[RMDB]
RNA sequence: GGGAACGACUCGAGUAGAGUCGAAAAUAGGGCAAAUCGCUUGCUCUACGUGCGGAAUCGACAUCAAGAGAUUUCGGAAGCAUAAUUUUUGCACCGCAGGGCAGCUAGUGAUCGUUGGUCCUGGCGCUUAGAGCAUGAUUUUCGAAUCAUGCUCUAAAAAAGAAACAACAACAACAAC
Reactivity to 2A3 in 0.01 (KOAc 150mM, MgCl2 10mM, bicine 150mM(pH8.5), 24C), signal-to-noise 8, nucleotides 027 to 126: u130a010g010g000g000c010a010a040a070u050c040g010c050u010u030g000c000u020c030u060a120c100g140u050g010c000g020g020a040a130u120c010g030a020c030a030u060c020a110a170g140a040g010a210u010u030u020c000g010g030a060a010g000c010a010u030a140a300u140u160u120u110u060g020c030a040c030c000g000c010a010g000g020g010c030a010g000c010u040a010g010u000g050a030u040c140g250u080u070g090g000u020c000c010u020g040g030c080g000c050
Reactivity to DMS in 0.01 (KOAc 150mM, MgCl2 10mM, bicine 150mM(pH8.5), 24C), signal-to-noise 9, nucleotides 027 to 126: u020a030g010g010g000c010a050a070a070u010c090g010c080u000u000g000c000u000c030u010a070c070g000u010g020c020g010g010a090a060u010c020g000a120c130a070u010c100a160a140g010a270g000a020u000u000u000c030g010g010a120a100g020c040a020u030a080a100u020u010u010u000u000g020c010a300c040c020g010c040a030g010g000g010c180a060g020c070u000a040g010u010g000a020u010c090g000u000u010g010g010u000c010c000u000g010g000c090g010c120